[RMDB]
Chemical mapping of a 207-nucleotide RNA with DMS and 2A3.
RNA sequence: GGGAACGACUCGAGUAGAGUCGAAAAGUCCAAAAUUGAUUCGGCGGCCCUGCCAUGAGGCCGAAACGAAGGCACGUACCCCUUCGAAUGGCGUCGGGGAGUCAGCGGCUAUAUAUGCGCCUAAUGCUAAAGUCGUGCUGGUUCGCCAGCACGACAACAAAAAGAGUUACUUCGGUAACUCUUUUUGAAAAGAAACAACAACAACAAC
Reactivity to DMS in 0.01 (KOAc 150mM, MgCl2 10mM, bicine 150mM(pH8.5), 24C), signal-to-noise 2, nucleotides 027 to 156: g010u000c030c030a100a020a110a160u000u010g010a140u000u000c050g010g010c030g030g000c000c000c020u000g000c040c110a090u010g010a060g020g020c000c010g030a040a050a160c010g040a070a050g010g000c040a110c130g000u010a170c070c050c000c010u000u010c020g010a060a130u000g010g030c050g010u010c080g000g000g000g030a130g030u010c040a100g000c040g010g030c050u000a110u020a110u010a090u010g010c030g000c010c020u000a110a140u020g010c040u000a080a090a140g010u000c010g080u010g010c030u000g000g010u010u020c300g010c020c000a040g000c040a010c010g010a010c000a030a070
Reactivity to 2A3 in 0.01 (KOAc 150mM, MgCl2 10mM, bicine 150mM(pH8.5), 24C), signal-to-noise 1, nucleotides 027 to 156: g060u040c000c000a060a020a040a080u180u130g030a070u110u060c020g020g010c030g000g020c000c010c000u030g020c010c020a050u080g020a020g010g020c000c020g040a030a000a000c020g000a020a000g020g030c100a020c220g100u210a150c030c010c010c020u020u000c000g040a060a080u130g010g040c010g150u060c020g000g050g020g040a040g070u080c020a020g020c050g050g000c000u020a020u010a030u020a030u300g050c020g000c010c010u060a040a030u090g050c030u100a120a110a050g000u000c000g000u000g010c000u000g000g040u040u040c180g010c040c010a000g000c000a000c000g000a000c000a000a000
The RNA was probed in 150 mM KOAc, 10 mM MgCl2 and 150 mM bicine (pH 8.5) at 24 C. The DMS profile rests on 4,945 reads.